[RMDB]
RNA sequence: GGGAACGACUCGAGUAGAGUCGAAAAAAACCCUGGGAUGCGGGGGACUGACAUCACAAACGGGAGGAAAUGAGCAUUCCCGGGCAGGACAGACCAGCCAGCUGGCUGUCCAUCAGGCUGGGCUGGAUUAAUGGUACCCGUUCGCGGGUACCAUUAAAAAAGAAACAACAACAACAAC
Reactivity to DMS in 0.01 (KOAc 150mM, MgCl2 10mM, bicine 150mM(pH8.5), 24C), signal-to-noise 2, nucleotides 027 to 126: a170a110a070c060c020c000u000g010g000g020a040u010g000c000g030g000g020g000g000a110c090u020g000a110c090a070u010c060a050c120a060a130a170c100g020g000g000a080g030g030a070a130a090u030g000a070g010c040a090u000u000c000c010c020g000g010g010c110a110g000g000a040c070a040g000a060c030c000a050g020c020c090a130g020c010u000g000g040c090u020g000u040c020c010a040u010c110a080g020g010c010u020g000g010g000c000u000g000g000a180
Reactivity to 2A3 in 0.01 (KOAc 150mM, MgCl2 10mM, bicine 150mM(pH8.5), 24C), signal-to-noise 2, nucleotides 027 to 126: a000a010a010c000c000c000u040g020g000g000a000u010g030c010g040g000g000g000g020a020c020u060g000a060c030a150u130c030a060c060a120a050a090c080g030g000g010a050g000g080a170a030a150u130g000a080g060c020a020u060u080c040c020c000g010g020g000c060a050g010g040a020c000a000g110a140c020c010a000g000c000c040a010g080c000u020g000g000c010u050g040u030c000c000a000u130c010a000g060g020c020u050g040g080g000c000u000g000g010a000
Description: Conditions: 150 mM KOAc, 10 mM MgCl2 and 150 mM bicine (pH 8.5), 24 C. The record gives the reactivity of an RNA of 177 nucleotides to DMS and 2A3. DMS adducts were read by reverse transcription with MarathonRT. 2A3 adducts were read by reverse transcription with SuperScript II with manganese. The DMS profile rests on 2,640 reads. Source: RMDB library RFM100, as collected in RNAgym.